[RMDB]
RNA sequence: GGGAACGACUCGAGUAGAGUCGAAAACUUAUGGGAGAGUGGUUACCUCUCAGCCCUUCCACCUUAGGGUGCCCUAUCCGAAGCACUGCAGUUUCGGUAGAAAGGCUAAGCACCUCGCAAUGAGGUACCUAAUGUAAUUCUUCGGAAUUACAUUAGGAAAAGAAACAACAACAACAAC
Reactivity to DMS in 0.01 (KOAc 150mM, MgCl2 10mM, bicine 150mM(pH8.5), 24C), signal-to-noise 8, nucleotides 027 to 126: c070u010u000a040u010g010g000g010a020g000a050g010u000g020g010u010u010a150c180c000u000c000u000c010a060g000c010c000c000u000u000c110c080a120c140c080u010u000a050g010g010g030u000g000c010c020c000u000a100u010c000c010g000a020a010g010c010a080c190u010g020c230a120g000u000u000u000c000g000g010u000a010g000a050a110a120g000g000c030u000a020a110g010c140a060c010c020u000c030g020c180a080a060u010g020a020g010g000u000a110
Reactivity to 2A3 in 0.01 (KOAc 150mM, MgCl2 10mM, bicine 150mM(pH8.5), 24C), signal-to-noise 6, nucleotides 027 to 126: c010u050u040a020u060g010g020g000a020g020a060g030u080g070g130u180u160a030c010c000u000c000u000c010a010g010c010c000c000u050u040c060c060a190c030c020u050u080a030g000g000g030u010g000c000c000c000u010a020u000c010c000g000a010a000g000c060a040c260u300g040c090a100g010u000u000u010c000g000g000u000a000g020a010a020a000g010g000c000u010a040a010g060c020a020c020c000u000c020g040c100a150a270u290g010a000g010g010u030a040